[RMDB]
RNA sequence: GGGAACGACUCGAGUAGAGUCGAAAAGUAUUGAACAACCCGUAUUAUAGGGCCAUGCCUGGAACUUUUUGUGGUAGGAAUGCUUUUGAUUUAAUACAUCAAGUUUUAGGAGGAUUAGUGCGGCCUAUCUAAGUGCAGAAUUCGUUCUGCACUUAGAAAAAGAAACAACAACAACAAC
Reactivity to 2A3 in 0.01 (KOAc 150mM, MgCl2 10mM, bicine 150mM(pH8.5), 24C), signal-to-noise 3, nucleotides 027 to 126: g040u040a120u240u220g110a120a010c020a030a100c040c010c010g010u070a120u180u120a160u150a060g010g060g010c050c030a040u110g010c000c000u020g030g000a020a020c000u040u040u000u010u070g030u050g050g030u030a050g100g110a080a040u110g060c010u180u150u120u220g080a040u110u080u040a110a070u030a060c010a000u000c000a000a030g010u000u000u030u050a030g000g010a020g040g040a080u120u130a080g040u070g170c060g020g000c000c000u000a000
Reactivity to DMS in 0.01 (KOAc 150mM, MgCl2 10mM, bicine 150mM(pH8.5), 24C), signal-to-noise 4, nucleotides 027 to 126: g020u010a130u000u010g010a110a100c080a100a160c020c010c020g000u010a110u000u000a120u010a130g000g010g010c040c040a120u020g020c010c010u010g000g000a010a010c020u000u000u000u000u000g030u000g010g030u010a080g010g010a070a040u010g000c140u010u010u000u000g000a090u000u000u000a060a090u010a020c040a010u000c020a020a020g010u000u000u000u010a020g010g020a080g010g000a150u010u000a060g010u010g010c100g020g010c020c020u000a060